[RMDB]
Conditions: 150 mM KOAc, 10 mM MgCl2 and 150 mM bicine (pH 8.5), 24 C. An RNA of 207 nucleotides, treated with 2A3 and read out base by base.
RNA sequence: GGGAACGACUCGAGUAGAGUCGAAAAAGUGAUUAUGGCUCGUUACGACGAGCCAUACUCACAACGGUUUUCCUAAAUCGUCGUGAGACGGACCUUGGAAAACCUAGUAUUUAAAUAACUAGGUCAAAAAACGGGUGGAGCUUCGGCUCCACCCGAAGGACUAAACAAAGUUCGCUUUGUUUAGUCCAAAAGAAACAACAACAACAAC
Reactivity to 2A3 in 0.01 (KOAc 150mM, MgCl2 10mM, bicine 150mM(pH8.5), 24C), signal-to-noise 2, nucleotides 027 to 156: a000g010u010g000a000u000u010a010u000g000g000c020u010c010g000u010u070a100c250g000a010c000g010a080g000c010c000a010u000a000c000u000c010a000c000a030a020c010g010g010u000u000u000u000c000c010u000a000a000a010u060c010g010u000c020g000u030g090a080g000a000c010g000g000a000c000c010u020u010g010g000a000a000a000a000c000c000u010a010g000u010a080u060u120u060a110a210a120u080a050a030c020u020a000g010g000u010c020a080a130a030a080a050a080c030g000g020g000u010g000g000a010g010c030u120u130c300g150g000c000u010c010c000a010c000c010c000g000a000a000